[RMDB]
RNA sequence: GGGAACGACUCGAGUAGAGUCGAAAACAGCUUGCCUGUAGCUAAGCAUUUAACUGGUCUCUUACAGGAGAAGCAGGACCCUAGUAGCUAGGGACACAUCUCAAACUGUGACCCAUGAACCAGUAGGUAUUGGCGUCACCUGGGAUCCUGACGUUAGGCUUCACUGUCAUUUCGAUGACAGUGAAGCAAAAGAAACAACAACAACAAC
Reactivity to 2A3 in 0.01 (KOAc 150mM, MgCl2 10mM, bicine 150mM(pH8.5), 24C), signal-to-noise 2, nucleotides 027 to 156: c030a000g000c000u070u090g040c000c000u120g020u060a020g030c050u100a170a050g120c080a130u030u090u220a230a120c060u040g060g000u030c020u040c050u130u060a000c000a020g050g010a070g030a080a060g000c040a020g050g090a020c010c000c000u030a080g060u050a030g140c060u040a000g020g020g050a030c010a000c000a100u030c020u000c020a130a180a160c120u140g010u020g070a030c000c000c000a000u050g020a080a110c000c010a090g180u240a110g280g030u000a040u050u030g030g000c150g020u000c000a000c050c000u000g000g010g000a030u020c010c030u040g020a040c080g040u030u040a100g030

Structure probing data (2A3) for a 207-nucleotide construct.
The 2A3 profile rests on 707 reads.
The data come from the RNA Mapping Database (RMDB), library OK3TST.
Conditions: 150 mM KOAc, 10 mM MgCl2 and 150 mM bicine (pH 8.5), 24 C.